[RMDB]
RNA sequence: GGGAACGACUCGAGUAGAGUCGAAAAGACGGCGCCCAACGCUUCACAACCUGAAAGAAGCGCCUGUUAUCAGGACGGUUGAUCCAUUUACCGGUGCAGACCUCUGCAAACACCGGGUUGCAGAACAUAGAGGGAAAUUUGUUCGCAAAUUUCCCAACUAUGGAGUUAUGUUCGCAUAACUCCAUAGAAAAGAAACAACAACAACAAC
Reactivity to 2A3 in 0.01 (KOAc 150mM, MgCl2 10mM, bicine 150mM(pH8.5), 24C), signal-to-noise 2, nucleotides 027 to 156: g110a020c090g030g020c020g020c010c000c000a040a020c000g010c030u020u010c020a000c000a130a060c010c000u050g010a010a020a020g010a000a010g010c020g030c040c010u060g010u140u250a130u250c020a000g000g000a010c030g040g000u010u050g030a060u000c040c010a040u130u130u180a150c010c010g010g010u080g020c030a020g130a240c020c070u170c070u060g000c000a030a150a010c040a040c030c030g000g000g000u010u050g040c040a020g020a150a000c030a100u240a160g110a210g040g000g010a010a000a000u010u010u010g050u030u070c170g000c130a010a010a010u000u000u000c020c010c000a000a000
Reactivity to DMS in 0.01 (KOAc 150mM, MgCl2 10mM, bicine 150mM(pH8.5), 24C), signal-to-noise 2, nucleotides 027 to 156: g000a050c020g000g000c030g010c010c010c010a050a070c030g000c030u000u000c010a110c010a090a220c100c040u010g000a140a240a260g000a070a010g000c010g020c010c040u000g000u000u010a140u010c070a070g000g000a080c010g020g070u000u030g030a190u000c060c020a110u010u000u000a110c000c000g030g030u000g020c020a090g000a100c070c070u010c080u000g010c040a110a060a040c030a100c000c020g030g040g020u000u010g010c000a030g020a130a090c040a130u000a070g040a180g000g010g000a030a040a030u000u000u000g000u000u010c300g000c000a000a020a040u000u000u000c000c000c010a010a050

This 207-nucleotide RNA was probed chemically with 2A3 and DMS. The reactions ran in a buffer of 150 mM KOAc, 10 mM MgCl2 and 150 mM bicine (pH 8.5), at 24 C.